The record gives the reactivity of an RNA of 177 nucleotides to DMS and 2A3. Conditions: 150 mM KOAc, 10 mM MgCl2 and 150 mM bicine (pH 8.5), 24 C. For 2A3, 4,191 sequencing reads were counted. The DMS profile rests on 4,375 reads. DMS (dimethyl sulfate) methylates the pairing face of unpaired adenines and cytosines.
RNA sequence: GGGAACGACUCGAGUAGAGUCGAAAAAACUGGCACAAUUCGCAGAAUUAGAAGCUUUUGCACAAUUUGCUUCUGAUCUCGAUAAAGCUACUCAGAAUCAAUUGGCAAGAGGUCAACGCUUACGUGAACGUAUAUCUGGGUUCGCCCAGAUAUACGUAAAAGAAACAACAACAACAAC
Reactivity to DMS in 0.01 (KOAc 150mM, MgCl2 10mM, bicine 150mM(pH8.5), 24C), signal-to-noise 3, nucleotides 027 to 126: a050a020c050u060g000g030c070a100c090a090a130u000u000c020g000c200a070g000a080a100u030u010a030g000a030a080g000c010u010u000u020u020g000c090a100c090a020a020u030u010u000g000c040u000u000c000u000g000a010u000c030u000c040g020a090u040a070a090a070g000c130u030a040c070u000c030a040g010a060a060u060c040a040a040u000u000g010g010c020a030a070g010a060g000g030u010c040a100a030c070g010c030u000u010a070c150g000u010g010a160
Reactivity to 2A3 in 0.01 (KOAc 150mM, MgCl2 10mM, bicine 150mM(pH8.5), 24C), signal-to-noise 6, nucleotides 027 to 126: a000a000c060u060g100g010c020a040c040a100a160u080u040c060g030c100a040g080a150a070u060u050a050g040a130a040g050c010u060u020u040u080g090c120a050c060a300a140u070u050u160g000c000u000u000c000u000g000a000u010c000u000c040g050a060u190a140a080a010g030c030u050a060c010u010c030a020g100a070a040u080c080a030a040u050u060g000g000c030a060a010g030a010g100g050u060c040a040a040c050g020c040u080u100a030c070g050u040g080a040